[RMDB]
RNA sequence: GGGAACGACUCGAGUAGAGUCGAAAAAGUGCUAUAAGGCUAUGAAUGCAUAUCCUCUUGUAGUCACUCCUCUUGUUUCAGCAGGCAUAUUUGGUGUAAAACCAGCUGUGUCUUUUGAUUAUCUUAUUAGCACCUCUCUUCGGAGAGGUGAAAAGAAACAACAACAACAAC
Reactivity to 2A3 in 0.01 (KOAc 150mM, MgCl2 10mM, bicine 150mM(pH8.5), 24C), signal-to-noise 7, nucleotides 027 to 129: a000g000u010g000c000u000a010u010a040a050g030g000c030u030a030u030g150a300a080u300g140c040a010u020a060u180c020c010u100c040u010u030g020u010a000g120u180c010a000c020u030c000c020u130c020u080u140g060u020u040u000c000a020g000c000a000g040g000c000a000u010a020u040u040u010g030g010u040g010u160a070a130a040a040c000c000a000g000c010u000g000u000g000u020c000u000u040u020u010g080a080u020u170a080u130c100u090u140a160u020u110a100g060
Reactivity to DMS in 0.01 (KOAc 150mM, MgCl2 10mM, bicine 150mM(pH8.5), 24C), signal-to-noise 4, nucleotides 027 to 129: a060g050u030g010c040u000a040u000a010a010g000g060c150u000a050u000g050a210a130u060g000c050a060u010a000u030c030c030u080c000u030u020g010u000a000g030u060c000a050c040u000c000c000u020c160u000u000g050u030u010u050c050a060g000c010a040g030g040c030a050u030a000u000u000u000g000g000u010g030u070a090a070a170a030c020c030a000g000c100u040g060u030g000u010c030u000u000u000u000g010a060u050u040a100u040c070u010u020a010u030u020a080g000
This 170-nucleotide RNA was probed chemically with 2A3 and DMS. For 2A3, 10,191 sequencing reads were counted.